[RMDB]
RNA sequence: GGGAACGACUCGAGUAGAGUCGAAAAGACAGCAACUUUAAAGAGUGGUAGCUAAUAUGUUGACUCCGAAAAUUAAAAUGCAGAUCAUGCAGCACGCGAAGGAAGUCUACCCGCACGAAUGCGCCGGGCUGGUAACGCAAAAAUCACGCGUGCAGAAAAUAGAAUAAGCAUUCGUGCUUAUUCUAUUAAAAGAAACAACAACAACAAC
Reactivity to 2A3 in 0.01 (KOAc 150mM, MgCl2 10mM, bicine 150mM(pH8.5), 24C), signal-to-noise 5, nucleotides 027 to 156: g050a010c040a010g030c010a040a040c040u140u150u300a180a160a000g080a030g030u050g030g040u080a050g010c020u030a050a050u130a180u200g050u080u050g030a060c040u020c040c040g060a080a050a040a010u160u180a090a080a050a040u080g010c000a000g080a180u180c040a060u100g020c020a000g000c000a010c000g000c010g050a070a020g060g020a040a030g030u020c010u010a010c000c000c010g030c000a010c010g060a250a100u170g030c030g040c060c040g030g010g000c010u000g010g010u030a050a010c030g000c060a050a060a040a060a030u060c030a020c040g000c000g000u010g000c000a010g040a020a100
Reactivity to DMS in 0.01 (KOAc 150mM, MgCl2 10mM, bicine 150mM(pH8.5), 24C), signal-to-noise 3, nucleotides 027 to 156: g010a080c060a100g020c060a060a070c050u000u000u010a140a100a170g010a100g040u010g010g010u020a050g000c030u000a060a080u000a080u020g010u010u000g000a080c050u010c020c030g020a070a050a080a130u000u010a050a030a050a090u000g010c020a070g010a110u000c050a060u000g040c020a130g010c010a020c020g010c020g020a110a150g020g000a070a130g000u000c010u000a060c020c000c010g030c020a060c010g020a120a120u010g010c030g030c090c020g010g010g030c020u000g000g010u000a060a080c020g000c040a030a030a050a060a120u000c020a050c020g010c020g020u020g010c000a090g010a060a070

Conditions: 150 mM KOAc, 10 mM MgCl2 and 150 mM bicine (pH 8.5), 24 C.
Structure probing data (2A3 and DMS) for a 207-nucleotide construct.
For 2A3, 3,044 sequencing reads were counted.
It was measured as part of the RMDB library OK3TST.
2A3 adducts were read by reverse transcription with SuperScript II with manganese.